[RMDB]
RNA sequence: GGGAACGACUCGAGUAGAGUCGAAAAGGACGUGACCAACCAGACGCACGACCCGACGCUAUGCGAAAUCGUGCUGGACGCGCCGCUGCCCGAGACUCCCGAGGAGAUCCCGGCGACGGCAUCGACCGCGAUCAAGUACAAUCUCGACCGGACGGACGCUACCCUCUGAAUUCGUUCAGAGGGUAGCAAAAGAAACAACAACAACAAC
Reactivity to 2A3 in 0.01 (KOAc 150mM, MgCl2 10mM, bicine 150mM(pH8.5), 24C), signal-to-noise 2, nucleotides 027 to 156: g050g050a030c050g030u100g060a160c020c020a040a030c060c020a060g020a070c110g040c020a010c000g020a080c040c060c000g030a050c030g040c130u170a050u300g020c060g010a050a090a000u010c010g000u000g030c020u060g070g030a030c080g000c000g020c070c000g050c020u040g010c000c000c070g040a050g030a070c040u070c080c080c070g110a060g000g030a000g040a210u060c060c060c010g000g000c000g010a020c000g010g010c000a050u100c050g000a070c030c000g000c050g100a110u010c020a040a040g050u050a190c030a130a130u020c000u010c050g010a020c010c000g030g030a060c000g000g000a000c110
The record gives the reactivity of an RNA of 207 nucleotides to 2A3. 2A3 is a SHAPE reagent: it acylates the 2'-hydroxyl of flexible nucleotides of all four kinds. It was measured as part of the RMDB library OK3TST. The RNA was probed in 150 mM KOAc, 10 mM MgCl2 and 150 mM bicine (pH 8.5) at 24 C. For 2A3 the reverse transcriptase was SuperScript II with manganese.